Structure probing data (DMS and 2A3) for a 207-nucleotide construct. It was measured as part of the RMDB library OK3TST. For DMS the reverse transcriptase was MarathonRT. 2A3 adducts were read by reverse transcription with SuperScript II with manganese.
RNA sequence: GGGAACGACUCGAGUAGAGUCGAAAAUUACAUGGUGAGUUUUAUUUCUGCACAGAUUAAACUUUCUAUCAUAGAGCUCUUCUUAAAAGAUUCUGAAUGACUACUCAAUAUGUAGGCAACUUAUUUACAUACUCAGAUACCUUGCAUGAUGCAAUUCCAACAAUGUCUGGUUCGCCAGACAUUGUUGAAAAGAAACAACAACAACAAC
Reactivity to DMS in 0.01 (KOAc 150mM, MgCl2 10mM, bicine 150mM(pH8.5), 24C), signal-to-noise 1, nucleotides 027 to 156: u000u010a130c110a030u010g010g020u000g010a090g000u000u000u010u010a090u010u000u020c030u000g050c080a120c150a160g010a080u010u000a010a070a090c010u000u010u010c010u010a080u000c050a110u010a130g000a220g010c030u000c010u000u000c020u030u000a050a060a080a120g010a100u000u000c010u000g010a110a140u000g010a060c000u030a080c010u000c080a050a060u000a080u000g030u010a010g000g010c010a040a100c050u000u000a090u000u000u000a080c070a140u000a080c060u000c000a060g010a130u010a000c050c020u000u000g000c030a120u000g000a120u000g000c040a050a280u010u000c030
Reactivity to 2A3 in 0.01 (KOAc 150mM, MgCl2 10mM, bicine 150mM(pH8.5), 24C), signal-to-noise 3, nucleotides 027 to 156: u130u060a040c020a030u100g000g000u010g010a040g020u020u030u030u120a040u040u080u050c060u150g040c070a070c030a080g080a040u070u090a070a030a010c020u050u180u000c070u120a070u030c040a120u080a090g050a020g030c040u000c000u110u060c010u050u100a050a130a090a030g010a080u190u000c000u010g120a190a090u060g030a050c010u040a000c000u040c030a060a100u080a050u300g030u020a010g020g040c030a080a000c020u030u070a040u150u080u020a050c040a030u080a090c010u010c050a000g010a140u080a060c030c030u040u030g060c040a040u100g000a040u100g080c020a020a120u190u150c110
The DMS profile rests on 1,721 reads. For 2A3, 1,277 sequencing reads were counted.